[RMDB]
RNA sequence: GGGAACGACUCGAGUAGAGUCGAAAAGAUAUGGAUCUAUUGUCAGAAAUGUCAUCGGAAACGAUGACCUUUCUUGGAUUUAUAGAGUCCUAAGUCAAAUCAAGUAGGCCUUCGGGCCUACUUGAAAGGUGUACAGAAGGUUCGCCUUCUGUACACCAAAAGAAACAACAACAACAAC
Reactivity to DMS in 0.01 (KOAc 150mM, MgCl2 10mM, bicine 150mM(pH8.5), 24C), signal-to-noise 2, nucleotides 027 to 126: g000a040u000a300u010g000g000a290u010c000u000a000u000u020g010u000c030a050g000a000a020a000u000g010u020c010a020u000c010g000g000a080a080a160c000g030a040u010g000a020c000c040u000u000u000c000u020u010g040g010a000u000u000u000a010u000a000g000a060g000u000c000c000u000a060a140g010u000c030a070a070a190u010c000a010a000g010u000a000g000g000c000c000u000u000c260g060g000g020c000c000u000a000c000u000u000g000a010a030a040
Reactivity to 2A3 in 0.01 (KOAc 150mM, MgCl2 10mM, bicine 150mM(pH8.5), 24C), signal-to-noise 2, nucleotides 027 to 126: g030a040u100a040u160g010g000a010u020c000u010a010u030u040g020u010c060a030g010a000a010a000u010g000u010c000a000u000c000g040g020a060a020a030c010g000a000u010g000a000c020c000u010u030u030c000u000u170g120g030a010u050u300u110a020u000a000g040a020g240u150c000c010u040a160a040g050u030c050a030a040a220u030c000a000a000g020u010a010g020g000c020c000u060u120c300g040g030g000c000c000u010a000c000u000u000g020a000a000a000